[RMDB]
RNA sequence: GGGAACGACUCGAGUAGAGUCGAAAAGGGGUCGAUCUUGGACCUACGAUUCUUCUUGGAUUUAUACUGAAGCCUCCACGGUAUUGUCAGAAGGGUAGCUAGAUCGACGGAGGCACCCAAAGGAGCAUCGCUUAAGUUCGCUUAAGCGAUGCUCCAAUCAAUAUUAACACUUCGGUGUUAAUAUUGAAAAAGAAACAACAACAACAAC
Reactivity to DMS in 0.01 (KOAc 150mM, MgCl2 10mM, bicine 150mM(pH8.5), 24C), signal-to-noise 1, nucleotides 027 to 156: g010g000g040g000u000c020g010a000u000c020u000u000g030g000a180c180c030u000a060c010g000a030u000u000c000u000u000c020u020u010g030g020a070u000u000u000a070u000a050c000u000g010a040a150g020c020c000u010c010c040a300c060g000g000u000a030u000u000g000u000c040a040g020a070a030g000g000g000u000a040g010c010u010a020g020a040u000c000g010a040c020g020g020a010g090g050c010a040c010c010c020a060a130a150g000g020a040g020c010a010u000c000g000c010u000u000a010a030g000u010u000c300g020c000u000u000a040a010g000c000g020a000u000g000c010u000c010c000a000a030
Reactivity to 2A3 in 0.01 (KOAc 150mM, MgCl2 10mM, bicine 150mM(pH8.5), 24C), signal-to-noise 6, nucleotides 027 to 156: g110g010g030g000u010c000g000a010u020c030u110u150g080g140a190c060c010u030a020c040g170a280u200u030c020u050u010c010u070u150g100g020a090u180u280u130a050u180a010c010u010g040a100a010g010c000c000u000c000c000a030c020g010g000u010a030u050u130g080u060c040a030g000a060a030g200g060g020u000a020g020c010u000a000g010a010u000c000g000a000c000g000g000a000g000g000c000a040c000c000c000a030a080a050g000g000a000g000c000a000u000c000g000c000u000u010a000a010g020u050u130c230g050c140u000u000a000a000g000c000g000a000u000g000c000u000c000c000a000a000
The record gives the reactivity of an RNA of 207 nucleotides to DMS and 2A3.
The 2A3 profile rests on 5,533 reads.
The DMS profile rests on 4,365 reads.
The reactions ran in a buffer of 150 mM KOAc, 10 mM MgCl2 and 150 mM bicine (pH 8.5), at 24 C.
High 2A3 reactivity points to a flexible backbone, as in loops and unpaired stretches.
The data come from the RNA Mapping Database (RMDB), library RNAMAK.